[RMDB]
RNA sequence: GGGAACGACUCGAGUAGAGUCGAAAAGAUAUGGACCUAUCAGCGAGGGAUGUACUGUAGGCACUAAUGUCGGAAACGACAUUAAACCUACAGUACAUCCUACCCACCGCUGUAAGGGUCCUAAGUCCCUGCUCAUCAUGUUCGCAUGAUGAGCAGGAAAAGAAACAACAACAACAAC
Reactivity to DMS in 0.01 (KOAc 150mM, MgCl2 10mM, bicine 150mM(pH8.5), 24C), signal-to-noise 1, nucleotides 027 to 126: g020a090u000a250u000g000g000a000c160c160u010a300u040c010a010g010c010g000a190g060g000g010a070u000g010u000a000c000u010g000u000a020g020g000c040a260c300u000a000a000u020g000u000c000g000g000a030a130a180c020g000a000c040a010u000u000a000a120a220c000c010u000a000c000a000g010u000a000c000a000u000c000c010u000a000c060c070c020a300c110c000g000c000u010g000u010a000a140g000g000g000u000c000c000u020a110a020g000u000c000